[RMDB]
RNA sequence: GGGAACGACUCGAGUAGAGUCGAAAAAGCCGGUACGCCGGCACAUCAUAAGGAGCCUAGACUUCCCAUUUGAAGGUGGCCAUUUCCUACCACCUUCAAAUGGUAAGUCCAGGCUCCUUCUGAUUAAAAAAGUCUUGAAGUUCGCUUCAAGACUUUUAAAAGAAACAACAACAACAAC
Reactivity to DMS in 0.01 (KOAc 150mM, MgCl2 10mM, bicine 150mM(pH8.5), 24C), signal-to-noise 1, nucleotides 027 to 126: a170g010c000c020g000g000u000a100c140g010c000c000g010g000c000a030c130a010u020c000a000u010a010a020g000g000a040g000c000c000u000a050g000a020c000u000u000c010c000c000a000u000u000u000g010a030a010g030g020u010g000g020c300c160a140u010u030u040c060c040u000a230c040c000a000c010c000u020u010c010a000a000a020u000g000g000u000a000a010g000u000c010c030a010g000g000c000u000c010c000u000u000c010u000g000a010u000u020a000a090
Record summary
Source: RMDB library RFM100, as collected in RNAgym. Chemical mapping of a 177-nucleotide RNA with DMS. For DMS, 3,307 sequencing reads were counted. DMS adducts were read by reverse transcription with MarathonRT. Reactivities are given for positions 27 through 126.